[RMDB]
Chemical mapping of a 177-nucleotide RNA with 2A3 and DMS. Reactivities are given for positions 27 through 126. The DMS profile rests on 2,927 reads.
RNA sequence: GGGAACGACUCGAGUAGAGUCGAAAAAAAGAUAUGGAGACGCAAGUCUUCGAGGAUCUAUGAGGUAGAUACAUCGGAAACGAUGUAUCCGAAUGCAUAGGGAGAAGUCACCGUCUCCUAAGUCAAACGAAUGUAACAACUUCGGUUGUUACAUUCGAAAAGAAACAACAACAACAAC
Reactivity to 2A3 in 0.01 (KOAc 150mM, MgCl2 10mM, bicine 150mM(pH8.5), 24C), signal-to-noise 2, nucleotides 027 to 126: a000a010a000g020a000u020a010u040g000g000a010g010a000c010g030c090a300a300g070u010c000u020u000c010g030a300g000g000a020u000c010u000a000u010g020a000g020g100u110a000g000a020u020a020c000a020u000c000g020g000a000a000a010c000g010a000u000g000u000a000u000c010c040g090a150a010u000g000c010a000u010a000g010g000g020a020g010a010a010g020u050c040a030c190c060g010u020c010u000c000c010u000a020a000g010u000c000a100a060a100
Reactivity to DMS in 0.01 (KOAc 150mM, MgCl2 10mM, bicine 150mM(pH8.5), 24C), signal-to-noise 2, nucleotides 027 to 126: a060a110a100g010a020u000a050u020g000g000a000g020a000c000g000c060a080a180g000u010c010u000u000c000g000a060g000g000a050u030c000u000a000u010g010a010g000g000u010a130g000a020u000a020c000a010u000c000g000g000a010a010a030c000g000a000u000g000u000a000u000c030c030g000a080a050u000g010c000a000u000a010g010g010g000a000g000a020a000g020u000c050a170c270c010g030u000c010u000c000c000u000a000a070g000u000c010a130a080a180